Chemical mapping of a 177-nucleotide RNA with DMS and 2A3. Values cover nucleotides 27 to 126. The reactions ran in a buffer of 150 mM KOAc, 10 mM MgCl2 and 150 mM bicine (pH 8.5), at 24 C.
RNA sequence: GGGAACGACUCGAGUAGAGUCGAAAAUGGAGGCUUCACGUCCAUGGGCCACAAAGGAUGUUGUCGGCGCGUACCGUUUUCUGCAGCGGGUGUGGCGCUUGGUCGUCGACGAGCACACCGGCGAAACUCGCAGAUGGUAAUUCGUUACCAUCUGCGAAAAAGAAACAACAACAACAAC
Reactivity to DMS in 0.01 (KOAc 150mM, MgCl2 10mM, bicine 150mM(pH8.5), 24C), signal-to-noise 2, nucleotides 027 to 126: u020g000g020a090g000g000c030u020u030c180a040c110g000u000c020c030a040u030g000g000g020c000c030a030c080a040a080a130g030g000a100u020g030u000u020g010u000c030g000g000c080g050c030g060u060a070c010c000g010u010u000u010u000c040u020g000c110a120g020c000g010g010g000u000g000u010g020g000c030g010c050u020u040g030g000u020c000g040u000c080g000a040c050g030a180g010c030a030c080a030c000c000g000g040c030g020a080a050a060c100
Reactivity to 2A3 in 0.01 (KOAc 150mM, MgCl2 10mM, bicine 150mM(pH8.5), 24C), signal-to-noise 2, nucleotides 027 to 126: u110g050g010a020g030g060c060u000u010c050a050c010g070u000c040c000a060u060g000g000g010c060c000a060c040a040a070a030g120g000a040u100g090u190u120g080u070c010g040g000c010g010c020g000u030a050c040c000g060u120u070u000u060c060u110g020c010a030g010c010g090g000g010u100g020u010g090g030c020g000c100u060u070g090g010u000c020g020u040c010g030a040c010g080a050g090c040a010c020a000c030c000g020g000c030g040a090a060a050c000

Notes:
Source: RMDB library OK1LIB, as collected in RNAgym. DMS (dimethyl sulfate) methylates the pairing face of unpaired adenines and cytosines. For 2A3 the reverse transcriptase was SuperScript II with manganese.